[RMDB]
Annotation: The record gives the reactivity of an RNA of 207 nucleotides to 2A3. Source: RMDB library OK3TST, as collected in RNAgym. Reactivities are rounded to 0.1 and cut off at 0 and 3.
RNA sequence: GGGAACGACUCGAGUAGAGUCGAAAAGAGUACAUAUGCCCAGCCUUACUGGUUCGGCUGGAUGCUUCGUGCAAAUGCUAUGUACGCCUACGUAUAUGUGCGUAGAUGCCUAUAUUUUCUCUCCUGAGAAAAUAUAGAUGCAUACAAAGAGUAUGCACACUCGCUCCUGGUUCGCCAGGAGCGAGUGAAAAGAAACAACAACAACAAC
Reactivity to 2A3 in 0.01 (KOAc 150mM, MgCl2 10mM, bicine 150mM(pH8.5), 24C), signal-to-noise 1, nucleotides 027 to 156: g080a010g000u050a010c010a010u020a000u170g000c000c010c000a010g000c000c000u080u070a080c070u200g290g000u130u120c030g010g000c010u000g000g000a060u040g020c030u090u230c210g200u210g000c030a000a060a050u130g030c000u020a000u000g000u010a000c030g010c030c000u010a010c000g030u030a090u030a030u250g110u080g090c030g010u000a000g060a170u230g020c000c010u000a000u000a000u000u000u000u000c000u000c010u010c000c140u090g010a000g000a010a000a000a000u000a000u000a000g000a040u040g000c000a000u020a110c000a010a300a000g060a090g000u020a000u000g030c000a000